[RMDB]
RNA sequence: GGGAACGACUCGAGUAGAGUCGAAAAGCAGACCCCGAAAACACCGCCAGAGGAACCGUGUGCGAGGCAGGUAGCGGCAACCAAAGGGUCAAAACAGUAGCAGCCGCUCUAGCAUGUCUGUGCAUGCCAGCCUCAGGCUAUUCGUAGCCUGAGGCUGAAAAGAAACAACAACAACAAC
Reactivity to 2A3 in 0.01 (KOAc 150mM, MgCl2 10mM, bicine 150mM(pH8.5), 24C), signal-to-noise 2, nucleotides 027 to 126: g080c120a030g010a150c020c010c010c040g040a020a020a040a000c100a010c000c010g050c060c050a050g020a020g120g090a010a030c060c030g080u030g000u050g070c010g000a100g080g000c020a020g040g040u040a010g010c000g010g000c050a000a030c000c020a040a040a270g120g000g000u020c010a060a100a000a000c040a040g090u180a010g050c100a010g000c050c000g050c000u010c000u020a000g010c020a010u050g030u040c070u080g100u120g040c000a020u010g030c000
Reactivity to DMS in 0.01 (KOAc 150mM, MgCl2 10mM, bicine 150mM(pH8.5), 24C), signal-to-noise 2, nucleotides 027 to 126: g000c190a090g030a110c110c000c000c050g010a090a060a090a030c050a070c020c000g050c010c010a170g000a020g000g010a090a080c130c040g010u000g000u020g000c060g000a070g000g030c100a050g010g000u030a000g000c040g000g000c060a180a120c000c070a030a180a180g010g000g000u020c050a040a040a130a080c190a100g000u000a040g020c130a110g000c000c000g000c000u000c160u000a000g000c080a020u000g000u020c030u040g000u030g000c020a000u000g030c020